[RMDB]
RNA sequence: GGGAACGACUCGAGUAGAGUCGAAAACAGCCGGUCGGCCAGGUCGAGUGCCUCGGCGCGCCGGCCGUAGAUCACCUCGUCGCACUCGAAGCCGAGCGAUUCCAGCUCGGGGUCGGGCGGCACCCAUCCGCCGUCGGUGAGUGCCUGGCGGCUCGCCCAAUAUUCCCGUCUUCGGACGGGAAUAUUGAAAAGAAACAACAACAACAAC
Reactivity to 2A3 in 0.01 (KOAc 150mM, MgCl2 10mM, bicine 150mM(pH8.5), 24C), signal-to-noise 1, nucleotides 027 to 156: c000a000g000c020c000g040g110u130c060g010g000c020c010a110g020g060u030c030g120a090g120u220g060c010c010u060c120g020g080c050g000c040g000c010c000g000g000c000c010g010u030a010g020a070u180c070a040c130c010u120c040g080u030c020g000c000a090c000u070c020g110a120a080g130c020c000g000a020g010c040g050a120u280u190c140c080a020g010c000u000c010g000g010g030g000u060c060g020g000g010c020g040g030c010a110c040c010c010a090u070c020c070g060c020c030g060u070c010g000g000u090g030a020g020u010g000c010c000u030g020g010c000g040g000c000u030c040g010c000c000